The data come from the RNA Mapping Database (RMDB), library VIROID.
Structure probing data (2A3 and DMS) for a 207-nucleotide construct.
For DMS the reverse transcriptase was MarathonRT.
The DMS profile rests on 2,514 reads.
The RNA was probed in 150 mM KOAc, 10 mM MgCl2 and 150 mM bicine (pH 8.5) at 24 C.
The 2A3 profile rests on 2,778 reads.
For 2A3 the reverse transcriptase was SuperScript II with manganese.
RNA sequence: GGGAACGACUCGAGUAGAGUCGAAAAUCCACUCACCCACUGCUCAAGAAUCUCUUCUCUUCCAUCGCGCUUCUUCCUCGAUUCGGACCGGCUCAUCUCGACAAGAGGCGGCGAUCCUCAGUGCUCUUACUCUUUUCUGUAAAGAGGAGACUGCUGGCAUUAGUACGCUCUUCGGAGCGUACUAAUGAAAAGAAACAACAACAACAAC
Reactivity to 2A3 in 0.01 (KOAc 150mM, MgCl2 10mM, bicine 150mM(pH8.5), 24C), signal-to-noise 4, nucleotides 027 to 156: u030c000c010a050c030u090c020a080c000c030c010a070c090u050g000c010u040c090a070a050g050a120a150u040c070u010c000u140u030c030u040c010u090u050c070c020a030u040c040g010c010g010c060u060u020c000u030u010c020c020u020c040g090a070u060u040c030g030g060a070c040c010g060g060c020u040c030a110u040c050u020c020g060a050c050a140a050g010a010g050g000c010g040g010c010g040a040u050c000c010u030c010a020g010u040g060c030u020c010u040u120a300c000u020c010u070u060u060u070c050u150g270u300a030a010a030g000a010g000g010a000g010a010c000u030g000c000u000g030g000
Reactivity to DMS in 0.01 (KOAc 150mM, MgCl2 10mM, bicine 150mM(pH8.5), 24C), signal-to-noise 1, nucleotides 027 to 156: u000c010c040a160c080u000c070a100c000c020c010a170c080u020g030c030u010c030a100a090g000a160a080u000c030u000c040u010u010c030u010c020u020u000c030c020a080u000c030g000c050g000c010u000u010c000u000u000c030c030u000c050g050a150u000u000c080g000g020a080c070c030g020g000c000u000c010a120u000c040u000c070g020a140c130a080a120g000a040g020g010c000g060g000c020g000a070u010c000c020u040c020a050g020u000g030c200u010c030u020u000a150c020u000c000u000u000u000u020c250u000g050u020a090a020a090g010a020g040g000a130g000a080c100u000g010c000u000g000g000